[RMDB]
This 207-nucleotide RNA was probed chemically with 2A3 and DMS. Reactivities are given for positions 27 through 156. For 2A3, 1,913 sequencing reads were counted. For DMS the reverse transcriptase was MarathonRT. The reactions ran in a buffer of 150 mM KOAc, 10 mM MgCl2 and 150 mM bicine (pH 8.5), at 24 C. It was measured as part of the RMDB library M2RFPK. 2A3 is a SHAPE reagent: it acylates the 2'-hydroxyl of flexible nucleotides of all four kinds.
RNA sequence: GGGAACGACUCGAGUAGAGUCGAAAAUUCCAUUUGAGUAUCCUGAAAACGGGCUUUUCAGCAUCGAACGUACAUAUUAAAUAGUAGGAGUGCAUAGUGGCCCGUAUAGCAGGCAUUAACAUUCCUGAAAACGUGAAAAGGUUCGCCUUUUCACGAAGAGUAGUACGAAGUUCGCUUCGUACUACUCAAAAGAAACAACAACAACAAC
Reactivity to 2A3 in 0.01 (KOAc 150mM, MgCl2 10mM, bicine 150mM(pH8.5), 24C), signal-to-noise 3, nucleotides 027 to 156: u030u000c000c000a020u140u030u090g080a100g000u110a150u220c020c010u020g000a050a040a000a000c010g000g010g000c000u080u050u040u160c080a040g000c030a040u110c040g050a150a060c020g080u080a030c050a060u120a060u180u300a250a180a140u130a090g070u000a010g020g110a110g020u020g000c040a040u060a120g110u040g060g000c000c000c000g000u000a000u000a000g010c010a000g000g020c000a000u020u040a050a000c000a040u030u140c000c000u060g040a050a070a030a100c000g010u000g020a000a000a000a000g000g000u040u060c040g160c000c000u020u000u000u000c000a000c000g000a030a010
Reactivity to DMS in 0.01 (KOAc 150mM, MgCl2 10mM, bicine 150mM(pH8.5), 24C), signal-to-noise 1, nucleotides 027 to 156: u020u000c010c010a070u000u010u000g020a240g020u000a090u000c060c010u020g000a060a120a120a100c030g010g000g040c040u000u010u000u040c050a270g000c030a070u000c070g000a100a100c120g010u000a080c080a170u000a140u010u010a090a140a160u000a090g030u000a150g010g020a120g000u000g000c010a120u010a100g040u000g020g020c010c010c010g000u020a010u010a070g030c030a010g040g060c060a090u000u000a080a040c060a090u010u000c040c010u010g000a090a040a110a140c000g030u010g010a000a000a010a030g010g040u010u010c300g000c020c000u000u000u010u000c000a000c000g000a010a040